RNA sequence: GGGAACGACUCGAGUAGAGUCGAAAAGAAAGAAGAAGGUGUGAGCCACUGCAUCUGGCUUUGACUAAAUAUAUUUUAAUUGAGUUAAUAUGGGAUCUGCCUUACUGUGAAUUCCAUGAAGGCUGAAGUGAUUAGUAUCAUUCGUGAUACUAAUCACAAAAGAAACAACAACAACAAC
Reactivity to DMS in 0.01 (KOAc 150mM, MgCl2 10mM, bicine 150mM(pH8.5), 24C), signal-to-noise 7, nucleotides 027 to 126: g000a080a050a090g000a070a050g010a090a040g000g010u000g010u000g010a140g010c060c060a060c090u000g010c030a030u010c050u000g010g000c050u010u000u000g010a090c020u010a030a050a100u040a100u040a050u030u010u020u030a050a110u000u010g000a070g010u000u010a040a100u030a040u000g000g000g010a020u000c020u000g000c030c100u010u020a090c160u000g000u010g010a090a060u010u010c030c010a030u010g000a120a080g000g000c010u000g000a110a110
Reactivity to 2A3 in 0.01 (KOAc 150mM, MgCl2 10mM, bicine 150mM(pH8.5), 24C), signal-to-noise 8, nucleotides 027 to 126: g060a000a040a000g030a020a010g020a020a010g030g010u040g020u030g020a070g030c010c020a060c030u070g000c010a060u020c030u050g090g070c000u060u030u050g020a040c050u100a030a070a010u160a080u040a140u100u140u060u190a140a190u070u100g030a030g040u020u110a090a040u100a110u130g020g010g020a020u020c030u070g040c010c020u090u140a140c030u040g010u050g140a110a120u140u000c030c010a000u060g040a040a020g040g000c040u070g040a100a040
The data come from the RNA Mapping Database (RMDB), library OK1LIB. This 177-nucleotide RNA was probed chemically with DMS and 2A3. Conditions: 150 mM KOAc, 10 mM MgCl2 and 150 mM bicine (pH 8.5), 24 C.